[RMDB]
RNA sequence: GGGAACGACUCGAGUAGAGUCGAAAAUGGAUGUUAAAGCGAUGAAAGUUGCUUACAUCAAAGAAGCAGACGGGCGCGAUCUGUCAGACAAAGAAGAUUCAUAUAUUGAUGCUUCUUUUGACUUUAUCGCCAACUCUGAUAAGAUGGCUGGCAACCGGUCACAGUGUCAAUUCGUUGACACUGUGACAAAAGAAACAACAACAACAAC
Reactivity to 2A3 in 0.01 (KOAc 150mM, MgCl2 10mM, bicine 150mM(pH8.5), 24C), signal-to-noise 2, nucleotides 027 to 156: u100g110g030a010u010g010u070u100a140a060a010g020c040g050a050u080g160a090a060a040g030u020u000g010c000u010u060a030c010a010u020c000a010a120a070g070a150a020g000c010a000g020a040c040g030g000g020c180g000c000g040a010u000c020u030g000u010c000a010g050a150c130a040a010a000g000a020a000g010a010u050u110c040a010u220a050u090a100u230u140g030a020u100g060c000u020u000c000u010u000u010u010g010a030c000u080u090u150a100u040c000g030c010c000a040a070c010u000c000u010g000a010u010a040a080g030a040u050g040g040c070u020g050g000c000a000a050c020c020g030